[RMDB]
RNA sequence: GGGAACGACUCGAGUAGAGUCGAAAACGUUGAGAUACAAAGACUACGAGUGAGUGUUGCCGUUCCAUAAACUCUAGAUUCUAUCGCUCGGAAGUGGCAGUGGUUUACAUUCAAUUGUAUAGUGCCAGCCGGGAGUAUAUUUCGAUAUACUCCCGGCAAAAGAAACAACAACAACAAC
Reactivity to 2A3 in 0.01 (KOAc 150mM, MgCl2 10mM, bicine 150mM(pH8.5), 24C), signal-to-noise 2, nucleotides 027 to 126: c030g000u000u060g020a050g000a040u120a070c070a060a080a020g050a000c010u000a000c040g090a000g020u000g000a030g000u020g000u080u050g020c020c000g060u070u060c000c000a080u130a060a090a070c050u010c000u140a160g000a110u030u000c040u090a110u150c050g020c240u120c010g090g000a140a000g010u060g010g000c070a020g030u020g070g000u220u210u000a000c000a000u000u070c010a030a200u050u030g040u050a050u000a030g070u000g130c020c030a000
Reactivity to DMS in 0.01 (KOAc 150mM, MgCl2 10mM, bicine 150mM(pH8.5), 24C), signal-to-noise 2, nucleotides 027 to 126: c150g000u000u000g000a020g030a100u000a030c030a170a120a190g010a070c070u020a140c040g000a020g040u000g000a040g000u000g020u000u020g040c020c020g060u010u000c080c000a020u000a070a090a210c100u020c090u000a030g000a050u000u000c070u000a040u010c090g010c010u030c170g000g020a040a170g000u020g020g000c020a090g020u000g020g020u000u010u000a000c010a000u000u010c170a030a020u000u060g030u000a090u000a070g000u010g000c010c010a070
This 177-nucleotide RNA was probed chemically with 2A3 and DMS. DMS adducts were read by reverse transcription with MarathonRT. 2A3 adducts were read by reverse transcription with SuperScript II with manganese. High DMS reactivity at an A or C suggests that its Watson-Crick edge is free.